[RMDB]
RNA sequence: GGGAACGACUCGAGUAGAGUCGAAAAGUUCCCUCUUAGCGUGGAGGUUUAACUACGCUCGUUCCCCAUAUCGGUGUGGGCGCACCGGAUUUAUAAAUCAAAGUUCUUUAGGGAACGGAAAGGAACAAAAAUCCAUGGGAGUUCGCUCCCAUGGAAACAAAUCUUGUAGCUUCGGCUACAAGAUUUGAAAAGAAACAACAACAACAAC
Reactivity to 2A3 in 0.01 (KOAc 150mM, MgCl2 10mM, bicine 150mM(pH8.5), 24C), signal-to-noise 1, nucleotides 027 to 156: g010u010u000c030c000c010u010c020u010u060a010g000c010g000u000g010g020a090g040g020u080u230u140a040a040c000u000a000c000g020c000u010c020g020u000u000c010c020c020c010a030u120a020u120c020g000g000u010g020u050g020g130g000c140g000c070a000c000c020g000g000a010u000u210u010a160u110a040a090a030u110c120a120a000a000g000u060u000c000u050u120u120a130g010g030g000a010a000c030g000g010a070a010a040g090g020a020a010c010a010a110a040a010a040u000c010c000a000u010g010g000g000a010g010u080u120c120g060c090u000c000c000c000a000u000g000g000a040a000a000
Reactivity to DMS in 0.01 (KOAc 150mM, MgCl2 10mM, bicine 150mM(pH8.5), 24C), signal-to-noise 1, nucleotides 027 to 156: g010u020u000c020c000c010u010c020u000u000a060g020c010g030u000g020g000a180g000g050u020u010u040a130a160c020u000a020c000g010c000u010c000g030u000u000c010c060c010c070a200u000a080u020c000g040g020u000g040u000g000g010g020c170g060c010a020c000c000g040g010a130u010u000u000a150u000a030a110a100u000c070a100a090a230g020u000u000c020u000u000u010a160g000g000g010a020a020c020g010g000a060a090a060g020g010a100a140c040a050a060a080a070a230u000c000c000a020u000g020g000g000a060g020u010u010c300g050c000u000c000c000c010a000u000g020g000a000a050a060
Annotation:
The record gives the reactivity of an RNA of 207 nucleotides to 2A3 and DMS. Reactivities are rounded to 0.1 and cut off at 0 and 3. For DMS the reverse transcriptase was MarathonRT. For DMS, 1,660 sequencing reads were counted. The RNA was probed in 150 mM KOAc, 10 mM MgCl2 and 150 mM bicine (pH 8.5) at 24 C.